[RMDB]
RNA sequence: GGGAACGACUCGAGUAGAGUCGAAAAUUGGAUUCGACAGGGGUCCCCCGAGCUUAUUAAGCGUGUCGGAGGGUUGGCUCCGUCAUCAACACAUUUCGGUUAAAUAUAACUGACAAAUCAAACAAUAAUUUCGCAGUAGCUGCGUAAUAGCCACUGCCCAAGAAAUACCGUUCGCGGUAUUUCUUGGAAAAGAAACAACAACAACAAC
Reactivity to 2A3 in 0.01 (KOAc 150mM, MgCl2 10mM, bicine 150mM(pH8.5), 24C), signal-to-noise 1, nucleotides 027 to 156: u100u040g090g020a010u080u160c120g020a020c050a050g000g010g000g060u090c000c000c000c000c000g000a040g000c040u300u000a090u160u280a300a010g020c030g040u140g120u040c000g000g080a070g070g050g000u170u110g090g000c020u010c000c000g040u010c000a000u020c020a000a080c030a010c000a080u000u170u140c000g000g030u100u020a000a300a210u200a170u050a100a040c010u010g010a000c040a050a110a060u140c080a130a000a110c040a010a090u220a200a080u070u170u220c040g000c000a020g020u050a040g020c010u030g020c020g130u140a040a090u090a160g000c000c000a010c020u000g010c000